About this RNA: An RNA of 207 nucleotides, treated with DMS and 2A3 and read out base by base. 2A3 adducts were read by reverse transcription with SuperScript II with manganese.
[RMDB]
RNA sequence: GGGAACGACUCGAGUAGAGUCGAAAAGGAUGUCCCGACCGGAGGCCGACAAUCCAGGGAACCGGAUGUCCUCACGUUGUUGCAGUACCAGAUGGCAUCUUAAAUCCGAUCUGCAAAUAAGCAUGUAAAAACCGGCAUACGUUCGCGUAUGCCGGAACUGUAACUAUUGCUUCGGCAAUAGUUACAGAAAAGAAACAACAACAACAAC
Reactivity to DMS in 0.01 (KOAc 150mM, MgCl2 10mM, bicine 150mM(pH8.5), 24C), signal-to-noise 1, nucleotides 027 to 156: g010g010a070u010g010u000c020c020c060g000a140c000c020g060g030a140g050g040c010c030g050a120c180a090a140u000c010c020a130g020g000g000a090a190c050c000g000g010a020u000g010u010c010c010u010c050a180c170g020u000u000g000u000u000g030c020a100g000u000a070c020c070a090g020a120u010g010g030c010a070u000c090u000u000a050a070a120u000c030c030g050a060u010c030u000g000c060a050a050a090u020a070a090g030c060a040u020g020u000a040a110a040a140a130c000c000g020g000c030a010u010a020c050g010u000u010c300g020c050g060u000a010u000g000c020c010g000g020a000a020
Reactivity to 2A3 in 0.01 (KOAc 150mM, MgCl2 10mM, bicine 150mM(pH8.5), 24C), signal-to-noise 2, nucleotides 027 to 156: g010g000a020u050g050u040c000c040c000g020a060c040c040g020g010a040g070g110c140c130g050a120c080a120a080u150c030c080a180g000g000g030a060a040c040c000g030g010a000u060g040u010c000c000u050c000a060c060g000u020u030g000u020u020g010c030a010g050u140a070c050c000a010g020a080u050g010g000c020a030u090c020u120u100a090a250a050u030c030c000g030a050u030c030u100g030c020a020a080a090u130a130a080g010c090a050u180g010u300a000a000a000a100a120c000c000g000g000c000a000u000a000c000g050u010u090c180g000c010g070u020a000u000g040c040c000g010g010a000a000